Conditions: 150 mM KOAc, 10 mM MgCl2 and 150 mM bicine (pH 8.5), 24 C. The record gives the reactivity of an RNA of 177 nucleotides to DMS and 2A3. The 2A3 profile rests on 832 reads.
[RMDB]
RNA sequence: GGGAACGACUCGAGUAGAGUCGAAAAUUAGGACCUGGUGGUUUAACACGUGAACGUGCUCAAAUGGAAGUACGUGACGUUCACUACUCUCACUAUGGCCGUAUGUGUCCAAUUGAAACACCUGAGGUAUCCUUCCCGGGUUCGCCCGGGAAGGAUAAAAAGAAACAACAACAACAAC
Reactivity to DMS in 0.01 (KOAc 150mM, MgCl2 10mM, bicine 150mM(pH8.5), 24C), signal-to-noise 1, nucleotides 027 to 126: u000u030a070g010g000a030c020c000u000g000g000u020g000g040u050u000u010a070a060c170a040c010g060u000g020a060a000c040g000u000g010c010u000c020a190a100a070u070g050g020a200a040g000u000a030c060g000u000g000a010c090g000u050u010c300a090c000u060a040c060u000c000u040c020a150c010u010a130u050g000g010c010c000g040u000a130u060g000u020g000u000c010c000a050a160u000u030g000a110a080a010c200a040c060c030u000g000a060g000g010
Reactivity to 2A3 in 0.01 (KOAc 150mM, MgCl2 10mM, bicine 150mM(pH8.5), 24C), signal-to-noise 2, nucleotides 027 to 126: u100u020a110g000g060a050c000c000u030g000g020u040g000g190u020u010u170a070a030c040a000c040g010u000g100a130a010c010g040u050g040c000u000c060a040a300a140u080g110g000a150a000g000u010a000c080g010u040g060a020c050g060u000u030c000a000c020u050a060c000u020c040u040c000a040c050u000a090u090g020g000c040c000g000u050a150u040g040u000g050u000c010c040a050a060u050u090g100a080a010a000c060a050c080c000u070g100a030g150g030

Notes
For DMS the reverse transcriptase was MarathonRT.